The record gives the reactivity of an RNA of 177 nucleotides to DMS. The data come from the RNA Mapping Database (RMDB), library OK1LIB. For DMS the reverse transcriptase was MarathonRT. The RNA was probed in 150 mM KOAc, 10 mM MgCl2 and 150 mM bicine (pH 8.5) at 24 C.

[RMDB]
RNA sequence: GGGAACGACUCGAGUAGAGUCGAAAAACUUAAAUCCAAUAAAUGCAAUGGUACAAUACAAUUUCUUCGGGAAUUUUGUCAGACUUCUGUUGAAUAUGCAUGAUCCCGCUAUCAGAUCAUCCCUGUAUGAGCUGAAAUCAUUCGUGAUUUCAGCUCAAAAAGAAACAACAACAACAAC
Reactivity to DMS in 0.01 (KOAc 150mM, MgCl2 10mM, bicine 150mM(pH8.5), 24C), signal-to-noise 1, nucleotides 027 to 126: a200c170u050u030a050a160a030u010c050c010a020a040u050a090a090a020u000g000c020a010a060u010g000g000u000a140c050a000a070u010a080c090a050a030u000u030u000c000u020u010c020g000g000g000a030a000u000u000u000u010g000u000c110a240g000a190c100u000u000c030u030g000u000u000g000a070a050u000a090u000g080c040a020u000g010a160u000c000c030c030g000c160u000a000u000c000a080g000a110u030c070a070u060c000c020c020u000g000u000a200